Notes:
Source: RMDB library M2RFPK, as collected in RNAgym. The record gives the reactivity of an RNA of 207 nucleotides to 2A3. Conditions: 150 mM KOAc, 10 mM MgCl2 and 150 mM bicine (pH 8.5), 24 C. For 2A3 the reverse transcriptase was SuperScript II with manganese. For 2A3, 1,741 sequencing reads were counted.
[RMDB]
RNA sequence: GGGAACGACUCGAGUAGAGUCGAAAAAGCGAUGAUACGUCAUCGCAACGAUUGCCUGAUCGUAAAACAGGAGACGGUCGUGGCCGCGACCACGUAAAAAAGCGUAACGUGGUCUACGGACCACGAAAAAAGCGCGGAACGUUCGCGUUCCGCGCAACAAGUGAACUCUGUUCGCAGAGUUCACUUGAAAAGAAACAACAACAACAAC
Reactivity to 2A3 in 0.01 (KOAc 150mM, MgCl2 10mM, bicine 150mM(pH8.5), 24C), signal-to-noise 2, nucleotides 027 to 156: a000g000c000g000a010u010g010a030u030a110c160g090u010c010a000u000c000g000c000a000a020c010g010a000u000u050g010c010c010u010g000a020u010c060g150u250a010a010a000a050c000a000g010g020a020g100a060c210g100g070u070c010g000u000g010g000c010c000g010c020g010a010c010c000a000c000g020u020a020a080a040a070a020a000g150c070g040u060a030a040c000g000u010g000g000u010c000u020a040c090g000g040a150c000c010a000c000g000a010a030a000a000a010a000g020c020g000c000g010g010a000a000c000g020u120u090c130g000c000g100u010u010c000c000g060c000g010c000a000a000